[RMDB]
Record summary
Conditions: 150 mM KOAc, 10 mM MgCl2 and 150 mM bicine (pH 8.5), 24 C. The record gives the reactivity of an RNA of 177 nucleotides to DMS and 2A3. For 2A3 the reverse transcriptase was SuperScript II with manganese. The data come from the RNA Mapping Database (RMDB), library TTRDES.
RNA sequence: GGGAACGACUCGAGUAGAGUCGAAAAGAUAUGGAUGAUCGAGGUGGACGUUGAAAUGACCUCGGAAACGAGGUCAUGGAGUCCUCUCGAGUCAUCCUAAGUCAAAAUCGUCGCUUCGGCGACGAAAGAGUACUCAGUGGUUCGCCACUGAGUACUCAAAAGAAACAACAACAACAAC
Reactivity to DMS in 0.01 (KOAc 150mM, MgCl2 10mM, bicine 150mM(pH8.5), 24C), signal-to-noise 2, nucleotides 027 to 126: g000a060u000a300u010g000g010a010u000g030a140u000c010g010a020g020g020u010g010g000a010c000g000u000u050g010a160a160a010u000g000a020c000c000u010c000g020g000a040a070a170c000g020a000g010g000u010c000a000u010g030g010a090g030u020c000c000u020c000u000c000g000a050g000u010c000a020u000c000c000u020a010a140g000u010c090a100a120a200a120u010c020g010u000c000g030c000u000u020c270g010g000c020g000a000c000g010a030a100a090
Reactivity to 2A3 in 0.01 (KOAc 150mM, MgCl2 10mM, bicine 150mM(pH8.5), 24C), signal-to-noise 2, nucleotides 027 to 126: g040a010u080a050u220g000g010a020u000g010a010u030c000g000a010g180g300u300g010g030a040c040g220u300u030g000a010a000a000u010g000a000c000c000u000c000g030g000a050a040a030c010g010a010g020g010u000c000a000u000g010g000a010g000u000c000c010u030c010u030c000g000a010g040u000c000a000u000c000c000u000a120a000g030u030c070a030a020a020a300u060c010g000u020c010g010c020u050u070c300g260g000c020g000a000c010g010a020a010a020